RNA sequence: GGGAACGACUCGAGUAGAGUCGAAAAGUACCUCCCGUUCGCGGGAGGUACCUUGGCCGCUUAGCACAGUGGCAGUGCACCACUCUCGUAAAGUGGGGGUCGCGAGUUCGAUUCUCGCAGUGGCCUCCAGGACCUAGCGAUUGUUCGCAAUCGCUAGCUUAGAUCAGGAAUUCGUUCCUGAUCUAAGAAAAGAAACAACAACAACAAC
Reactivity to DMS in 0.01 (KOAc 150mM, MgCl2 10mM, bicine 150mM(pH8.5), 24C), signal-to-noise 3, nucleotides 027 to 156: g000u000a030c000c020u000c000c000c020g070u000u020c210g040c060g030g010g000a000g020g040u010a000c010c030u010u000g000g030c000c010g000c010u000u000a180g000c040a050c050a100g040u000g010g010c070a020g000u010g050c040a200c000c010a020c010u000c040u010c300g000u000a070a040a040g010u000g000g000g030g060g020u010c040g000c010g010a050g010u020u000c080g020a300u010u000c000u010c020g060c020a030g010u010g020g010c000c020u000c030c030a110g000g030a110c170c000u000a000g010c010g020a010u000u000g020u000u010c170g000c010a030a020u010c000g020c000u000a000g020
Reactivity to 2A3 in 0.01 (KOAc 150mM, MgCl2 10mM, bicine 150mM(pH8.5), 24C), signal-to-noise 3, nucleotides 027 to 156: g000u000a000c000c000u000c020c010c000g030u050u070c260g000c030g050g000g020a000g020g000u000a000c000c000u040u030g010g000c000c000g000c010u020u010a020g020c010a010c010a010g000u040g050g080c060a020g000u010g030c010a010c010c000a000c000u040c010u060c090g260u300a130a080a020g020u010g010g000g000g000g020u080c000g000c010g000a000g010u010u000c010g000a010u020u000c000u000c000g000c000a010g000u030g000g010c000c000u010c000c000a020g010g070a060c020c000u000a010g000c000g000a000u010u010g020u080u060c230g000c120a000a010u020c010g000c020u000a010g000
An RNA of 207 nucleotides, treated with DMS and 2A3 and read out base by base. Reactivities are given for positions 27 through 156. Conditions: 150 mM KOAc, 10 mM MgCl2 and 150 mM bicine (pH 8.5), 24 C. DMS adducts were read by reverse transcription with MarathonRT. Source: RMDB library PDB130, as collected in RNAgym.